Source: RMDB library OK1LIB, as collected in RNAgym. The record gives the reactivity of an RNA of 177 nucleotides to 2A3. High 2A3 reactivity points to a flexible backbone, as in loops and unpaired stretches.

[RMDB]
RNA sequence: GGGAACGACUCGAGUAGAGUCGAAAAGACGACGGUGCCGAUCGCCGAGAGCGUUCGAGCCCGAUGGGAAGAUCACCUUCCUUAACUUGUUGGAAGGGUGUUUCGGGGCUGUCGUAGGGUCCUGAUCGGUCCCCAGGAGUUUCGACUCCUGGGGACCAAAAGAAACAACAACAACAAC
Reactivity to 2A3 in 0.01 (KOAc 150mM, MgCl2 10mM, bicine 150mM(pH8.5), 24C), signal-to-noise 1, nucleotides 027 to 126: g070a000c030g000a000c000g110g000u240g260c000c000g060a070u120c000g040c000c180g300a180g000a010g200c000g000u000u050c000g000a100g000c000c000c000g190a160u150g090g050g120a020a150g060a070u150c040a110c020c000u090u000c000c000u070u000a090a140c050u200u300g060u100u020g030g000a000a030g160g000g060u000g000u010u240u000c000g000g000g000g100c050u000g020u050c020g000u000a000g120g000g000u010c000c000u010g060a000u110c090